[RMDB]
RNA sequence: GGGAACGACUCGAGUAGAGUCGAAAAUCGUUUGCUCUUAUUCGCCCUCAAAGAAGAGCGUCCUAGAUAUUAAGACUAUAUAUAUUUGUGGGUGUAUAGUUUUGUCUGGGUGCAGACAGAGGAGACGGGAUAAUAAAAUUUUCGAAUUUUAUUAUCCAAAAGAAACAACAACAACAAC
Reactivity to 2A3 in 0.01 (KOAc 150mM, MgCl2 10mM, bicine 150mM(pH8.5), 24C), signal-to-noise 4, nucleotides 027 to 126: u070c010g020u010u020u080g030c000u010c000u030u040a060u110u110c030g040c020c000c000u020c010a130a120a020g100a040a020g010a010g000c000g000u010c000c000u020a010g020a040u040a080u140u170a090a040g010a000c010u000a000u010a000u000a010u010a090u110u100u110g090u100g060g190g000u020g010u000a000u000a000g000u000u000u020u050g010u000c010u000g000g050g010u070g070c010a020g060a150c020a030g060a030g070g040a060g020a060c080g050
Reactivity to DMS in 0.01 (KOAc 150mM, MgCl2 10mM, bicine 150mM(pH8.5), 24C), signal-to-noise 1, nucleotides 027 to 126: u040c030g030u000u010u010g000c030u000c040u000u010a100u000u020c010g010c020c010c000u000c050a050a080a170g000a190a060g000a130g010c030g000u000c000c010u000a030g000a040u030a090u060u030a050a060g010a020c000u000a050u000a020u000a020u010a120u020u000u020g000u010g060g020g060u000g000u000a000u000a000g000u000u000u020u000g000u000c010u000g010g020g020u020g000c070a090g000a070c090a020g000a050g000g000a080g000a050c180g040
The record gives the reactivity of an RNA of 177 nucleotides to 2A3 and DMS. The 2A3 profile rests on 2,367 reads. Source: RMDB library OK1LIB, as collected in RNAgym. Conditions: 150 mM KOAc, 10 mM MgCl2 and 150 mM bicine (pH 8.5), 24 C.